[RMDB]
RNA sequence: GGGAACGACUCGAGUAGAGUCGAAAAUGCAACAGCCUUCGGUCAGCGAUCUCGCGGUAGUGGAUACCGAAUGCCGCAAGGCCGGGCUGCCGCGUCCGGUGAUGCCGGUAGCGGUAGGCGACGCCAAGUCGUGGGUAGUGUUCGCACUACCCACGACAAAAGAAACAACAACAACAAC
Reactivity to 2A3 in 0.01 (KOAc 150mM, MgCl2 10mM, bicine 150mM(pH8.5), 24C), signal-to-noise 1, nucleotides 027 to 126: u140g020c030a010a030c020a070g040c030c000u090u150c050g000g000u010c030a010g050c030g100a110u070c060u130c210g140c010g030g000u030a060g020u020g290g230a100u030a080c030c000g060a040a030u110g000c000c000g000c040a110a080g000g000c030c000g000g010g010c010u010g000c000c020g000c000g020u000c010c000g000g010u130g160a110u300g150c040c030g040g000u020a050g030c010g000g000u010a070g050g080c010g000a060c030g050c060c020a030a050
Reactivity to DMS in 0.01 (KOAc 150mM, MgCl2 10mM, bicine 150mM(pH8.5), 24C), signal-to-noise 2, nucleotides 027 to 126: u000g020c060a050a300c080a050g000c030c020u000u020c040g070g010u000c030a240g020c000g000a050u020c110u010c160g060c020g020g000u000a000g000u020g000g000a160u000a010c030c010g000a130a080u000g010c110c000g000c090a080a130g000g000c000c000g010g010g020c000u000g020c020c010g000c020g010u000c000c010g000g020u000g030a110u000g010c000c000g040g030u000a130g020c000g010g010u000a050g010g000c010g020a110c110g000c050c070a090a160
Chemical mapping of a 177-nucleotide RNA with 2A3 and DMS. In probing experiments dimethyl sulfate is read out at A N1 and C N3, which are open when not base-paired. The RNA was probed in 150 mM KOAc, 10 mM MgCl2 and 150 mM bicine (pH 8.5) at 24 C. It was measured as part of the RMDB library OK2TRN. For DMS the reverse transcriptase was MarathonRT.